[RMDB]
Structure probing data (2A3 and DMS) for a 177-nucleotide construct. The reactions ran in a buffer of 150 mM KOAc, 10 mM MgCl2 and 150 mM bicine (pH 8.5), at 24 C. It was measured as part of the RMDB library RFM100. For 2A3 the reverse transcriptase was SuperScript II with manganese. Values are in units of 0.01, from 0 to 300, in steps of 10.
RNA sequence: GGGAACGACUCGAGUAGAGUCGAAAAAGCGCAAAGUAGGUGGUAAAUUCCAUCUAAAGCUAAAUAUUGGUGCGAGACCGAUAGCGAACAAGUACCGUGAGGGAAAGAUGAAAAGAACUUUGAAAAGGCAUCGUUUUUGAUUCGUCAAAAACGAUGCAAAAGAAACAACAACAACAAC
Reactivity to 2A3 in 0.01 (KOAc 150mM, MgCl2 10mM, bicine 150mM(pH8.5), 24C), signal-to-noise 2, nucleotides 027 to 126: a000g010c060g000c000a050a040a000g020u000a000g020g000u010g010g000u100a210a300a080u100u060c000c000a000u040c000u030a030a040a040g000c020u040a030a060a070u170a080u020u060g000g010u000g000c050g050a060g120a020c000c010g130a020u130a000g080c040g010a210a070c000a240a000g000u000a070c000c000g060u100g000a110g000g000g040a000a000a080g070a010u140g030a050a000a000a120g010a010a010c080u060u090u020g040a010a140a000a000g090
Reactivity to DMS in 0.01 (KOAc 150mM, MgCl2 10mM, bicine 150mM(pH8.5), 24C), signal-to-noise 2, nucleotides 027 to 126: a040g020c020g000c180a160a010a130g000u000a050g000g040u000g030g100u000a110a250a160u030u050c000c000a000u000c010u020a000a070a030g020c080u000a050a050a060u000a070u000u010g000g010u000g000c130g020a160g020a090c000c030g040a050u000a040g000c150g010a050a090c180a050a140g000u000a120c010c000g000u000g000a100g000g000g000a040a070a010g000a100u010g010a040a020a060a140g060a100a100c060u000u000u010g060a030a060a050a090g040